RNA sequence: GGGAACGACUCGAGUAGAGUCGAAAAUUGGCGAAUGCCUGUGGAUCUACAUUUGUUGCGGGUUCGAGAUCCGUCAGAGCCCGGCUCUGUAGCUCAAUGGUAGAGCGGUGUAUUCACAUAAACUUGUAAAAGACACGUGCCUUCGGGCACGUGUCAAGUCCCAAUAAUACUUCGGUAUUAUUGGGACAAAAGAAACAACAACAACAAC
Reactivity to DMS in 0.01 (KOAc 150mM, MgCl2 10mM, bicine 150mM(pH8.5), 24C), signal-to-noise 1, nucleotides 027 to 156: u000u000g010g000c010g080a030a050u020g010c040c040u010g010u010g010g030a070u000c030u000a010c010a070u010u010u010g010u000u000g050c020g050g020g060u000u000c040g010a180g000a100u020c050c090g050u010c040a200g000a150g000c050c010c000g040g030c020u000c010u010g030u000a070g020c040u000c030a070a100u000g030g000u000a080g020a100g000c010g000g020u000g040u000a040u010u030c060a090c020a120u000a130a050a110c060u000u010g000u000a070a080a120a120g010a030c000a010c040g090u030g000c000c020u010u020c300g030g030g000c000a000c020g020u010g000u000c000a000a040
Reactivity to 2A3 in 0.01 (KOAc 150mM, MgCl2 10mM, bicine 150mM(pH8.5), 24C), signal-to-noise 1, nucleotides 027 to 156: u090u090g040g000c070g090a210a040u250g030c050c020u060g030u010g020g000a030u000c040u190a030c030a030u030u030u140g050u020u050g100c020g050g000g000u000u000c040g010a050g010a300u080c040c000g110u020c000a020g000a030g000c010c050c000g030g000c020u020c020u040g090u040a000g020c010u030c100a100a100u130g080g040u140a040g000a030g020c010g030g000u030g000u020a050u000u040c030a020c000a030u150a090a160a090c020u060u100g050u170a070a100a020a000g010a000c000a000c010g020u000g040c000c000u040u050c110g090g000g030c020a000c040g000u000g000u000c000a000a000

This 207-nucleotide RNA was probed chemically with DMS and 2A3. It was measured as part of the RMDB library M2RFPK. High DMS reactivity at an A or C suggests that its Watson-Crick edge is free. Reactivities are given for positions 27 through 156. The RNA was probed in 150 mM KOAc, 10 mM MgCl2 and 150 mM bicine (pH 8.5) at 24 C.